[RMDB]
Record summary: The record gives the reactivity of an RNA of 177 nucleotides to DMS. The reactions ran in a buffer of 150 mM KOAc, 10 mM MgCl2 and 150 mM bicine (pH 8.5), at 24 C. For DMS, 486 sequencing reads were counted.
RNA sequence: GGGAACGACUCGAGUAGAGUCGAAAAGACGAACGAAAACACAAAUGUUCCACGGUGCAGAAGGGUCCCUCACAUGAGGAUCACCCAUGUAACUCGGACAGGAAAUGCUUUUGGGAAAAAGAGAGAAUAAAUGAGGUCCUUUCGAGGACCUCAUUUAAAAAGAAACAACAACAACAAC
Reactivity to DMS in 0.01 (KOAc 150mM, MgCl2 10mM, bicine 150mM(pH8.5), 24C), signal-to-noise 1, nucleotides 027 to 126: g010a180c080g000a210a150c010g030a030a010a020a050c010a020c050a050a220a110u000g000u010u030c020c150a020c180g010g000u000g000c010a010g010a140a140g040g000g000u020c170c010c040u000c030a150c160a120u010g000a020g050g000a040u000c120a020c010c000c090a090u000g000u020a030a060c030u000c120g020g000a000c000a000g000g020a040a130a150u000g000c030u000u000u000u000g000g040g000a120a030a080a020a000g000a090g010a060g000a020a070